[RMDB]
RNA sequence: GGGAACGACUCGAGUAGAGUCGAAAAAUGCUUCUCAGGAUGGCGCGUUGCAGUCCAACAAGAUCCAGGGACUGUACAGAAUUUUCCUAUACCUCGAGUCGGGUUUGGAAUCUAAGGUUGACUCGCUAAAACUUUACGUGGUUCGCCACGUAAAGAAUCGAUAGAUUUACUUCGGUAAAUCUAUCGAAAAAGAAACAACAACAACAAC
Reactivity to DMS in 0.01 (KOAc 150mM, MgCl2 10mM, bicine 150mM(pH8.5), 24C), signal-to-noise 1, nucleotides 027 to 156: a090u000g030c060u000u000c040u000c030a170g000g040a120u010g020g040c030g020c070g010u000u000g020c010a010g000u010c000c020a050a120c040a060a140g060a110u000c030c060a100g000g000g020a030c000u000g000u010a140c100a170g020a080a090u000u000u000u000c000c020u000a120u010a070c040c000u000c040g010a020g040u000c020g010g000g030u000u000u020g010g010a030a040u020c120u000a080a110g000g000u010u010g030a100c050u010c030g010c120u010a070a070a160a090c010u000u000u000a020c020g030u030g030g000u020u000c300g000c000c020a000c010g000u010a000a020a010g000a020a060
Reactivity to 2A3 in 0.01 (KOAc 150mM, MgCl2 10mM, bicine 150mM(pH8.5), 24C), signal-to-noise 4, nucleotides 027 to 156: a000u080g000c030u060u020c030u020c080a030g140g020a100u120g050g030c030g000c040g130u100u050g010c000a000g010u000c010c000a060a060c050a130a170g090a130u120c100c060a020g010g000g010a010c010u010g020u040a010c010a030g200a160a050u050u010u030u000c000c000u030a050u060a080c000c010u020c060g010a020g000u030c040g000g020g000u040u050u060g020g010a050a030u030c050u090a130a130g130g030u130u130g060a020c020u040c020g010c010u050a050a060a030a070c000u010u000u000a000c000g000u010g010g010u020u040c090g020c070c000a000c000g000u000a000a000a000g010a000a050